[RMDB]
An RNA of 177 nucleotides, treated with DMS and 2A3 and read out base by base.
The reactions ran in a buffer of 150 mM KOAc, 10 mM MgCl2 and 150 mM bicine (pH 8.5), at 24 C.
High 2A3 reactivity points to a flexible backbone, as in loops and unpaired stretches.
RNA sequence: GGGAACGACUCGAGUAGAGUCGAAAAGGCACCGUUAAGGACGUCGAUGUCAGCGCCACAGCGCAUCGACGUUACGUCAGUGUCGACGGCGGCAUGAGCGACAACAUCCGCACCGCGCUCUACGGCGCACUCGGGCGACUUUCGAGUCGCCCGAGUGAAAAGAAACAACAACAACAAC
Reactivity to DMS in 0.01 (KOAc 150mM, MgCl2 10mM, bicine 150mM(pH8.5), 24C), signal-to-noise 2, nucleotides 027 to 126: g010g000c000a040c020c000g030u000u020a090a200g010g010a010c000g020u020c000g000a020u000g010u000c090a210g000c000g010c130c300a140c160a200g010c020g000c000a020u000c000g000a020c000g000u000u000a010c060g010u010c020a080g000u000g020u000c000g030a140c170g000g030c020g010g000c200a080u000g000a000g030c080g010a170c130a070a080c130a110u010c020c010g010c070a120c030c050g000c020g000c040u000c070u020a080c150g020g000c000g020
Reactivity to 2A3 in 0.01 (KOAc 150mM, MgCl2 10mM, bicine 150mM(pH8.5), 24C), signal-to-noise 1, nucleotides 027 to 126: g010g000c000a010c010c000g050u050u130a120a060g120g000a020c000g000u010c000g000a010u000g100u140c160a080g000c030g090c190c180a230c140a130g010c020g010c000a010u000c000g010a000c010g000u010u000a020c030g030u040c010a010g010u000g020u060c040g000a070c000g050g020c000g030g000c100a030u090g040a030g110c050g060a110c020a090a020c010a050u030c050c010g010c040a040c010c030g010c000g020c000u000c040u040a050c070g030g000c040g010